RNA sequence: GGGAACGACUCGAGUAGAGUCGAAAAUUUCUAUCGAAUGUACCGGAAGACGGAUCAUCGUUCAAGUAUCCUCAAUUUCAUGGUAUACCUAAAAUCCACAAGAAACCUACUGGAUUUAGGCCCAUAAGACCUGGCGAUUAUUCGUAAUCGCCAGGUCAAAAGAAACAACAACAACAAC
Reactivity to 2A3 in 0.01 (KOAc 150mM, MgCl2 10mM, bicine 150mM(pH8.5), 24C), signal-to-noise 1, nucleotides 027 to 126: u050u050u030c000u000a070u070c070g000a020a020u100g000u080a030c000c000g070g000a050a050g100a000c030g090g060a000u050c000a000u000c010g040u070u040c030a070a000g000u000a080u080c000c000u110c000a140a090u100u060u080c080a000u110g000g090u110a030u020a250c000c000u090a000a000a000a230u000c000c000a200c110a040a090g100a240a240a050c030c050u130a000c060u180g040g000a000u000u010u000a000g000g000c000c000c000a070u070a000a000